The data come from the RNA Mapping Database (RMDB), library M2PK90. This 177-nucleotide RNA was probed chemically with DMS and 2A3. The 2A3 profile rests on 2,048 reads. For 2A3 the reverse transcriptase was SuperScript II with manganese.
RNA sequence: GGGAACGACUCGAGUAGAGUCGAAAAAAUUGGAGCGUAAUCGCGUCUUGACGUGAGUGAGCCUAGACUGUAGGCUAUCCCAAGUGGGAUAGCAUAGCUCACAAUACGCUGAUCUUCAGUCAUACAAAGCCUGACGAUAAUUCGUUAUCGUCAGGCUAAAAGAAACAACAACAACAAC
Reactivity to DMS in 0.01 (KOAc 150mM, MgCl2 10mM, bicine 150mM(pH8.5), 24C), signal-to-noise 2, nucleotides 027 to 126: a100a150u020u000g000g010a040g070c050g000u000a030a300u000c010g000c000g000u000c100u010u000g000a040c040g010u030g010a040g000u000g000a050g000c010c040u000a070g010a000c030u000g030u000a030g000g000c000u000a020u000c000c000c000a300a170g000u040g000g000g020a010u000a000g010c000a120u000a060g000c000u000c000a010c010a120a150u000a050c000g000c000u000g000a010u000c050u000u000c020a020g020u000c020a080u010a140c220a080a110
Reactivity to 2A3 in 0.01 (KOAc 150mM, MgCl2 10mM, bicine 150mM(pH8.5), 24C), signal-to-noise 2, nucleotides 027 to 126: a000a030u210u120g010g000a020g000c010g000u030a040a010u010c010g000c000g030u000c070u090u170g110a030c000g020u000g010a020g000u000g000a000g030c010c010u000a010g010a020c010u010g030u040a020g000g030c010u000a010u000c000c000c020a100a160g300u300g010g000g010a000u010a000g000c000a000u030a030g000c010u000c000a000c000a000a000u030a010c010g000c000u010g050a100u010c000u030u040c010a010g000u000c010a020u090a130c070a060a190